[RMDB]
RNA sequence: GGGAACGACUCGAGUAGAGUCGAAAAUGAUUGAGCGUAGGACACACUCAGACUGUACGACAGUCUGACACACACCUACGCUAGUGCAUCGUGUGUGUGAUAUCGAUGUAGCACGAAAAUGAAGUAAUACUCCUAGACCUUUCGAGGUCUAGGAGUAAAAAGAAACAACAACAACAAC
Reactivity to 2A3 in 0.01 (KOAc 150mM, MgCl2 10mM, bicine 150mM(pH8.5), 24C), signal-to-noise 1, nucleotides 027 to 126: u260g050a100u130u240g070a020g000c000g020u000a000g000g090a100c010a000c000a000c120u010c000a000g000a010c010u010g030u120a100c120g070a050c210a020g010u000c010u000g000a000c000a000c000a020c000a010c010c000u000a000c000g000c010u000a000g000u010g010c010a010u000c020g050u030g020u020g020u060g080u030g110a100u050a000u170c020g000a020u030g040u080a050g000c030a040c140g090a000a050a010a070u170g040a100a010g040u080a100a080
Reactivity to DMS in 0.01 (KOAc 150mM, MgCl2 10mM, bicine 150mM(pH8.5), 24C), signal-to-noise 3, nucleotides 027 to 126: u000g010a130u010u000g010a070g000c010g030u010a010g000g000a090c130a090c140a120c230u000c000a010g010a030c000u020g020u030a140c300g010a120c010a010g000u000c000u000g000a020c050a030c040a120c200a090c000c000u000a000c010g020c010u000a020g030u000g020c030a090u000c010g010u000g000u000g000u010g060u000g000a120u000a040u000c030g000a030u010g010u000a110g020c050a070c040g010a050a060a040a100u000g000a070a110g000u000a090a160